[RMDB]
RNA sequence: GGGAACGACUCGAGUAGAGUCGAAAACCUGUUGACUUCGGUCAACAGGAAAAGGUGGAUGCUACGCUACCGAAGUAGCAAAAGUGCAGAAGGAACGCACUAAAACUUAUCCGUUCGCGGAUAAGAAGAGUAACUACUAGUUCGCUAGUAGUUACUCAAAAGAAACAACAACAACAAC
Reactivity to DMS in 0.01 (KOAc 150mM, MgCl2 10mM, bicine 150mM(pH8.5), 24C), signal-to-noise 6, nucleotides 027 to 126: c010c000u000g010u000u000g000a010c000u000u010c200g040g000u000c000a000a000c000a010g000g020a020a030a080a110g010g010u010g000g010a180u000g010c010u000a010c020g000c060u010a200c040c030g010a080a130g010u000a010g010c010a030a110a060a030g020u000g000c010a110g020a150a130g020g010a100a100c160g010c010a010c010u000a040a040a090a170c000u000u000a000u000c000c000g020u000u000c200g020c010g010g000a000u000a010a000g000a080a070
Reactivity to 2A3 in 0.01 (KOAc 150mM, MgCl2 10mM, bicine 150mM(pH8.5), 24C), signal-to-noise 8, nucleotides 027 to 126: c000c000u000g000u000u000g000a010c010u020u040c240g090g000u010c000a000a000c000a010g010g030a030a110a010a030g100g020u100g060g060a100u080g000c010u020a010c020g010c040u040a060c020c060g120a100a000g020u020a000g000c000a050a040a030a010g000u010g000c010a010g060a280a070g220g050a110a040c070g000c010a010c020u030a030a020a030a050c000u010u000a000u000c020c000g020u020u060c290g000c010g060g000a000u000a010a000g020a020a030
Overview
An RNA of 177 nucleotides, treated with DMS and 2A3 and read out base by base. DMS adducts were read by reverse transcription with MarathonRT. Reactivities are given for positions 27 through 126. The reactions ran in a buffer of 150 mM KOAc, 10 mM MgCl2 and 150 mM bicine (pH 8.5), at 24 C. DMS (dimethyl sulfate) methylates the pairing face of unpaired adenines and cytosines. It was measured as part of the RMDB library M2PK50.